[RMDB]
Structure probing data (DMS and 2A3) for a 207-nucleotide construct. Conditions: 150 mM KOAc, 10 mM MgCl2 and 150 mM bicine (pH 8.5), 24 C. For 2A3, 1,050 sequencing reads were counted. High DMS reactivity at an A or C suggests that its Watson-Crick edge is free. It was measured as part of the RMDB library OK3TST.
RNA sequence: GGGAACGACUCGAGUAGAGUCGAAAAGCUGGAUUGAGCCAAUCACAUCCUCUUCCCUGAGAAUGGGGACCUUGAGAUACUGAGCUGAUUAGAUAAUGGUUAGUUCUUGGGCUGAAAUUUCGUAUAGAAUUGUGACCACCUUCUGAACUACAGCAUAAUCAUUGAUACGCUUCGGCGUAUCAAUGAUAAAAGAAACAACAACAACAAC
Reactivity to DMS in 0.01 (KOAc 150mM, MgCl2 10mM, bicine 150mM(pH8.5), 24C), signal-to-noise 2, nucleotides 027 to 156: g000c060u010g010g040a150u020u010g040a120g020c030c040a190a120u010c020a060c030a120u000c020c010u000c000u000u000c040c030c050u020g010a130g000a130a150u000g000g000g020g020a030c070c010u020u000g000a060g000a130u000a040c130u000g000a080g020c000u010g020a120u000u000a070g030a080u000a080a140u000g000g030u020u010a080g020u010u000c000u040u000g020g030g040c000u000g000a020a070a100u000u020u000c020g010u030a110u010a070g000a040a080u000u020g000u020g010a080c040c050a080c010c040u000u000c030u000g030a060a100c040u000a010c080a100g000c040a110u000a080
Reactivity to 2A3 in 0.01 (KOAc 150mM, MgCl2 10mM, bicine 150mM(pH8.5), 24C), signal-to-noise 3, nucleotides 027 to 156: g070c140u070g000g000a040u040u070g060a020g090c100c080a040a170u040c010a020c010a080u030c000c000u000c010u050u050c000c000c000u020g080a070g070a110a150u200g010g000g020g030a030c020c000u090u040g060a070g020a110u130a140c060u040g050a010g020c020u030g010a110u040u110a050g050a060u060a170a050u090g060g000u020u020a040g000u040u010c000u030u070g020g030g020c040u060g080a040a080a060u060u100u030c060g010u060a060u030a210g130a070a040u080u090g070u060g070a080c020c010a010c040c030u110u120c090u070g030a050a050c020u070a050c070a010g000c020a040u130a160